[RMDB]
RNA sequence: GGGAACGACUCGAGUAGAGUCGAAAAUGAAAUCAUUAGCCUACUUCGCCAAAAUAAUAUCCCUUAUCAGGGAACAGACAUCGAUUUACUAGCCAAUUUAGUGCAUUUACGUGACGUCUGGUCACUACCCAUGGUAUAGGUUCGCCUAUACCAUGGGAAAAGAAACAACAACAACAAC
Reactivity to 2A3 in 0.01 (KOAc 150mM, MgCl2 10mM, bicine 150mM(pH8.5), 24C), signal-to-noise 5, nucleotides 027 to 126: u070g020a040a050a060u150c050a050u060u110a030g000c010c010u040a070c030u050u070c020g030c050c000a020a100a020a040u140a070a040u070a120u130c010c010c000u030u110a220u180c100a010g000g000g040a000a010c010a000g040a010c010a060u040c020g030a020u030u050u060a100c080u030a030g030c020c030a120a090u110u150u090a160g010u100g080c020a030u060u070u120a080c070g010u030g040a000c030g030u060c080u110g080g030u030c020a010c060u060a070
Reactivity to DMS in 0.01 (KOAc 150mM, MgCl2 10mM, bicine 150mM(pH8.5), 24C), signal-to-noise 4, nucleotides 027 to 126: u020g020a110a120a130u010c070a060u000u010a130g020c020c010u010a050c090u000u010c050g020c020c060a050a060a060a050u000a060a060u000a150u010c010c010c010u000u000a090u010c130a120g000g000g000a040a110c050a040g010a030c040a060u000c020g010a110u010u000u010a080c090u000a080g010c060c050a090a090u010u000u010a080g020u000g020c050a140u010u010u000a040c220g000u010g000a030c030g010u010c070u010g010g010u010c030a070c060u000a140
An RNA of 177 nucleotides, treated with 2A3 and DMS and read out base by base. The DMS profile rests on 3,077 reads. It was measured as part of the RMDB library OK2TST. The RNA was probed in 150 mM KOAc, 10 mM MgCl2 and 150 mM bicine (pH 8.5) at 24 C. Reactivities are given for positions 27 through 126.